[RMDB]
RNA sequence: GGGAACGACUCGAGUAGAGUCGAAAAUUGUAUAAGUGUAUUGCGAAGGUAAGAAGCAAACUAUUGUAGGUGGUGUCUCAUACCAGUUGAACACUGAUUGUGUAGUAGAUUGAGUACCUUGAGAAGAAGUACUGGAAGAGGAGGAGGUAGUAGAGCCAUAACUUCUUCUGUUCGCAGAAGAAGUUAUAAAAGAAACAACAACAACAAC
Reactivity to DMS in 0.01 (KOAc 150mM, MgCl2 10mM, bicine 150mM(pH8.5), 24C), signal-to-noise 4, nucleotides 027 to 156: u000u020g020u010a110u010a060a140g030u010g000u010a090u010u000g010c030g030a130a120g030g020u000a050a080g010a100a130g030c050a050a050a100c050u000a080u000u000g020u000a090g040g030u010g010g020u000g010u000c030u000c030a130u000a060c030c050a060g020u000u000g000a090a120c070a060c050u000g020a090u000u010g020u000g010u000a070g020u000a120g000a130u000u000g010a120g010u000a030c070c030u000u000g010a130g010a070a080g000a020a080g000u000a040c030u000g020g020a030a090g000a090g010g010a060g020g010a060g020g000u000a060g030u000a030g000a100g030c050c110
Reactivity to 2A3 in 0.01 (KOAc 150mM, MgCl2 10mM, bicine 150mM(pH8.5), 24C), signal-to-noise 7, nucleotides 027 to 156: u080u080g060u050a120u040a190a090g020u040g040u070a080u110u120g030c050g030a050a020g040g010u080a100a050g030a060a010g030c050a080a060a070c050u070a090u170u160g050u080a050g000g040u030g030g010u020g040u010c010u010c050a030u050a080c020c040a020g030u030u040g120a130a010c030a000c070u080g070a150u160u100g030u010g010u060a040g020u010a030g020a100u030u090g020a020g020u030a050c040c000u050u050g070a050g000a110a000g030a040a010g020u040a050c050u050g000g030a060a020g000a030g030g010a010g010g010a010g020g000u030a020g010u030a010g010a010g030c030c030
The record gives the reactivity of an RNA of 207 nucleotides to DMS and 2A3. The reactions ran in a buffer of 150 mM KOAc, 10 mM MgCl2 and 150 mM bicine (pH 8.5), at 24 C. The DMS profile rests on 9,900 reads. Source: RMDB library OK3TST, as collected in RNAgym. For DMS the reverse transcriptase was MarathonRT.